Description:
The record gives the reactivity of an RNA of 177 nucleotides to DMS and 2A3. The reactions ran in a buffer of 150 mM KOAc, 10 mM MgCl2 and 150 mM bicine (pH 8.5), at 24 C. DMS adducts were read by reverse transcription with MarathonRT. 2A3 adducts were read by reverse transcription with SuperScript II with manganese. The 2A3 profile rests on 52,594 reads.

RNA sequence: GGGAACGACUCGAGUAGAGUCGAAAAGUCUAGCGAUUUAGGGAUCCGAUCCGGGUUGCAGAACUCAACUGCAUGAGUACACACGCAAGUCGCGUAUUGGCCGAACGGCCAAGGAUCUGCUAGACGACAUUAUGAUAGCAUUCGUGCUAUCAUAAUGAAAAGAAACAACAACAACAAC
Reactivity to DMS in 0.01 (KOAc 150mM, MgCl2 10mM, bicine 150mM(pH8.5), 24C), signal-to-noise 9, nucleotides 027 to 126: g010u000c000u000a000g010c010g010a130u010u010u010a150g020g000g000a030u000c010c010g010a120u000c110c010g000g000g000u000u000g010c010a090g010a090a050c050u000c060a040a100c140u010g010c220a130u000g000a060g010u000a070c160a130c180a120c130g000c040a030a040g000u000c030g020c130g000u010a170u000u000g010g010c000c000g000a080a090c210g010g010c000c000a020a050g000g010a010u000c000u000g020c000u000a010g000a020c010g010a160
Reactivity to 2A3 in 0.01 (KOAc 150mM, MgCl2 10mM, bicine 150mM(pH8.5), 24C), signal-to-noise 9, nucleotides 027 to 126: g000u000c000u000a000g000c030g100a140u050u140u280a180g050g020g030a010u000c010c020g020a030u050c020c010g020g040g040u010u010g000c000a010g030a090a030c010u010c040a040a100c100u230g070c120a120u060g010a000g040u120a050c070a000c010a010c110g010c020a040a070g300u040c020g010c050g050u050a070u060u070g010g000c010c010g090a210a090c200g010g000c000c000a000a020g000g000a010u000c040u100g000c000u000a000g000a000c000g000a000